Chemical mapping of a 177-nucleotide RNA with DMS and 2A3. The reactions ran in a buffer of 150 mM KOAc, 10 mM MgCl2 and 150 mM bicine (pH 8.5), at 24 C. For 2A3 the reverse transcriptase was SuperScript II with manganese. In probing experiments dimethyl sulfate is read out at A N1 and C N3, which are open when not base-paired. DMS adducts were read by reverse transcription with MarathonRT.
RNA sequence: GGGAACGACUCGAGUAGAGUCGAAAAUCAGGAACCUUCGGGUUCCUGAAAAGAACGCUGCAUCGCAAAGCGACCGCGCGAGAGCGCGCGUACGCGAAGAAAAAAGAAUUGGGUUCGCCCAAUUCAACCUAUAUACAUCGUUCGCGAUGUAUAUAGGAAAAGAAACAACAACAACAAC
Reactivity to DMS in 0.01 (KOAc 150mM, MgCl2 10mM, bicine 150mM(pH8.5), 24C), signal-to-noise 5, nucleotides 027 to 126: u000c000a010g010g020a010a010c000c000u000u010c230g050g020g010u000u000c000c000u000g000a010a020a100a070g010a110a100c090g010c070u020g010c090a100u000c060g010c070a080a160a220g010c000g010a040c080c010g020c010g000c000g010a160g000a260g030c010g010c000g010c120g010u000a020c130g040c000g010a100a130g020a000a040a050a090a160a090g000a010a000u000u000g010g000g010u000u010c250g010c000c000c000a000a010u000u000c000a070a080
Reactivity to 2A3 in 0.01 (KOAc 150mM, MgCl2 10mM, bicine 150mM(pH8.5), 24C), signal-to-noise 4, nucleotides 027 to 126: u020c010a010g010g010a000a000c010c000u090u180c290g100g010g000u000u000c000c000u000g000a000a000a010a010g020a090a010c070g010c100u130g010c020a080u090c060g010c060a060a110a110g000c010g020a030c010c030g000c000g010c010g010a040g010a010g110c000g000c010g060c090g010u040a080c030g010c010g030a070a070g070a030a120a010a000a000a010g000a000a000u000u000g030g000g020u040u050c220g070c020c010c000a000a000u010u000c000a000a010